[RMDB]
RNA sequence: GGGAACGACUCGAGUAGAGUCGAAAAUGUAGACCAAGAGCUACCUGUCACCUUUUCAGCACCCCCGCCUCAGUCCUUGUAUAAAUAUUCCACAAUGAAACUAGUAGGGUGUUCUGCUUACGAGAACACCCAUAAGGGGGUUCGCCCCCUUAUGGGUAAAAGAAACAACAACAACAAC
Reactivity to 2A3 in 0.01 (KOAc 150mM, MgCl2 10mM, bicine 150mM(pH8.5), 24C), signal-to-noise 3, nucleotides 027 to 126: u070g030u030a010g030a080c040c040a070a020g050a020g020c010u020a030c010c030u030g050u050c020a090c000c000u030u040u040u060c040a010g030c030a050c000c020c000c010c010g030c010c010u010c030a020g010u040c020c010u030u020g040u030a120u090a100a150a030u140a070u080u060c030c000a070c030a090a090u140g090a150a060a010c030u020a040g080u050a050g040g090g010u070g020u070u000c010u030g090c020u040u060a040c040g060a010g020a080a020c010
Reactivity to DMS in 0.01 (KOAc 150mM, MgCl2 10mM, bicine 150mM(pH8.5), 24C), signal-to-noise 9, nucleotides 027 to 126: u000g010u000a060g010a120c030c060a090a090g010a140g010c030u000a040c050c050u010g010u000c060a070c040c020u000u000u000u000c070a080g020c060a210c050c020c020c020c030g000c050c020u000c040a070g010u000c020c020u000u010g010u000a070u010a050a060a080u000a110u000u000c030c030a060c110a070a090u010g000a080a070a080c070u000a060g020u010a090g000g010g020u000g010u000u000c010u000g010c100u000u000a090c130g010a050g010a030a040c050
Structure probing data (2A3 and DMS) for a 177-nucleotide construct. The DMS profile rests on 25,703 reads. The RNA was probed in 150 mM KOAc, 10 mM MgCl2 and 150 mM bicine (pH 8.5) at 24 C. The data come from the RNA Mapping Database (RMDB), library OK2TST. For 2A3 the reverse transcriptase was SuperScript II with manganese.